[RMDB]
RNA sequence: GGGAACGACUCGAGUAGAGUCGAAAAGAUAUGGAAGGGUCCAACCCUCAACAGCUCGGAAACGAGACAUGAGGGCUUGGAGCCCUUCCUAAGUCAAAACACUCAGCUACUUCGGUAGCUGAGUGAAUCCGAGGAGUAAGUUCGCUUACUCCUCGGAAAAAGAAACAACAACAACAAC
Reactivity to DMS in 0.01 (KOAc 150mM, MgCl2 10mM, bicine 150mM(pH8.5), 24C), signal-to-noise 2, nucleotides 027 to 126: g010a070u010a300u010g000g000a010a000g010g010g000u030c010c000a000a010c000c010c010u010c000a030a110c230a250g000c010u010c000g030g010a070a120a190c000g000a000g030a030c090a130u010g000a010g010g000g030c300u010u000g000g000a080g030c000c000c010u000u000c000c000u000a010a060g010u000c040a130a080a100a180c000a010c010u000c020a010g000c000u000a000c010u000u040c170g040g000u000a000g020c010u010g000a010g020u010g000a030a070

The record gives the reactivity of an RNA of 177 nucleotides to DMS. For DMS, 990 sequencing reads were counted. It was measured as part of the RMDB library TTRDEL. Conditions: 150 mM KOAc, 10 mM MgCl2 and 150 mM bicine (pH 8.5), 24 C.